[RMDB]
Chemical mapping of a 207-nucleotide RNA with DMS and 2A3.

RNA sequence: GGGAACGACUCGAGUAGAGUCGAAAAGCGUAACGGCUGGGUGUAACCCAACUCUAGGUGUGCUGAUUAGCGGGCUUGACUCCGUAACAAAUAGGCACUGGUGGUAAAAAGCAUCCCACCUACUUACAAAGCUCCAAAUUCUUCGGAAUUUGGAGAAGACCGUAUACCUGUUCGCAGGUAUACGGUCAAAAGAAACAACAACAACAAC
Reactivity to DMS in 0.01 (KOAc 150mM, MgCl2 10mM, bicine 150mM(pH8.5), 24C), signal-to-noise 1, nucleotides 027 to 156: g050c020g030u000a080a080c130g030g000c010u000g000g030g090u000g010u020a080a300c010c000c030a150a080c010u000c050u000a160g030g010u000g010u010g000c010u000g010a230u000u000a110g030c000g030g010g000c070u000u040g000a040c130u000c010c000g050u010a110a170c090a040a130a030u040a060g010g060c010a010c070u000g000g000u050g000g040u000a030a040a060a140a220g000c070a220u020c110c000c060a070c030c030u000a030c080u000u000a150c000a070a120a130g020c010u000c000c020a030a000a020u000u000c000u000u010c300g040g020a020a000u000u000u000g000g010a000g000a010a020
Reactivity to 2A3 in 0.01 (KOAc 150mM, MgCl2 10mM, bicine 150mM(pH8.5), 24C), signal-to-noise 2, nucleotides 027 to 156: g070c010g020u050a020a080c020g060g020c090u030g040g020g040u090g050u070a110a120c000c000c000a040a050c050u070c070u180a060g110g000u020g020u000g090c010u020g030a170u060u060a020g050c010g020g000g000c030u070u170g020a090c020u050c050c000g020u050a020a030c030a050a080a030u130a040g010g000c020a010c050u020g000g030u010g010g010u050a170a170a000a000a000g080c020a060u080c030c000c010a010c020c000u060a060c030u050u000a050c070a050a110a050g040c000u000c010c010a000a000a000u000u000c000u010u040c090g070g020a000a000u020u000u000g000g000a010g010a000a000

Source: RMDB library M2RFPK, as collected in RNAgym. The DMS profile rests on 1,444 reads. For DMS the reverse transcriptase was MarathonRT. As a SHAPE reagent, 2A3 marks flexible, mostly unpaired nucleotides at the ribose 2'-OH. The RNA was probed in 150 mM KOAc, 10 mM MgCl2 and 150 mM bicine (pH 8.5) at 24 C.